[RMDB]
Structure probing data (2A3) for a 177-nucleotide construct. For 2A3 the reverse transcriptase was SuperScript II with manganese. Conditions: 150 mM KOAc, 10 mM MgCl2 and 150 mM bicine (pH 8.5), 24 C.

RNA sequence: GGGAACGACUCGAGUAGAGUCGAAAACUUGCAUACAUUUAAUUCUCAAAUUAAAGGUGCUCAUUGUACGUAUGCAUGCUUUUUUUAAUCUGUCAAUGAAUGGGAGAAUAUAUAUGUAUAUUUGUGCUCCCCGUGAUGGAUUCGUCCAUCACGGGGAAAAAGAAACAACAACAACAAC
Reactivity to 2A3 in 0.01 (KOAc 150mM, MgCl2 10mM, bicine 150mM(pH8.5), 24C), signal-to-noise 2, nucleotides 027 to 126: c000u020u060g020c040a050u060a060c040a050u000u070u180a010a020u050u020c110u020c060a110a120a100u050u090a000a120a030g050g000u050g020c000u040c130a130u200u120g100u050a040c030g150u170a000u110g010c000a010u070g100c000u060u020u070u020u000u010u070a040a200u000c010u040g200u050c120a130a090u080g180a170a070u010g070g110g000a010g000a010a000u070a000u030a000u010a000u120g050u050a070u010a050u150u070u210g070u030g020c000